[RMDB]
RNA sequence: GGGAACGACUCGAGUAGAGUCGAAAAGAUAUGGAGCGUGCCAGGGAGCUGGAGUGUCGGAAACGACAUGACAGCUUUGAUCUGGUCACGCUCCUAAGUCAAAACUCAGUCACUUCGGUGACUGAGAGCUACUUCAUAACUUCGGUUAUGAAGUAGCAAAAGAAACAACAACAACAAC
Reactivity to 2A3 in 0.01 (KOAc 150mM, MgCl2 10mM, bicine 150mM(pH8.5), 24C), signal-to-noise 3, nucleotides 027 to 126: g010a010u080a040u160g010g000a000g000c010g010u010g010c010c000a010g030g000g000a030g000c010u010g010g010a050g010u000g000u010c000g000g020a080a080a070c010g000a000c010a010u020g030a010c010a010g000c000u060u070u030g010a010u000c000u000g020g050u170c000a000c010g000c000u000c000c000u000a000a000g010u000c010a010a000a020a030c010u000c000a010g000u010c000a010c020u050u190c300g160g000u000g000a010c000u010g000a000g000a000
Reactivity to DMS in 0.01 (KOAc 150mM, MgCl2 10mM, bicine 150mM(pH8.5), 24C), signal-to-noise 5, nucleotides 027 to 126: g000a030u000a300u000g000g000a010g010c010g030u000g000c010c010a010g010g000g010a010g010c000u000g010g010a300g010u000g010u000c000g000g000a110a100a280c010g010a000c000a010u000g000a300c000a000g000c000u000u010u010g020a050u000c000u010g000g000u000c020a000c000g000c000u000c000c000u000a000a060g000u000c040a090a090a120a230c000u000c000a000g010u000c000a000c010u000u010c190g050g020u000g010a010c000u000g000a010g000a040
Structure probing data (2A3 and DMS) for a 177-nucleotide construct. For DMS the reverse transcriptase was MarathonRT. For 2A3, 19,406 sequencing reads were counted. The data come from the RNA Mapping Database (RMDB), library TTRDES.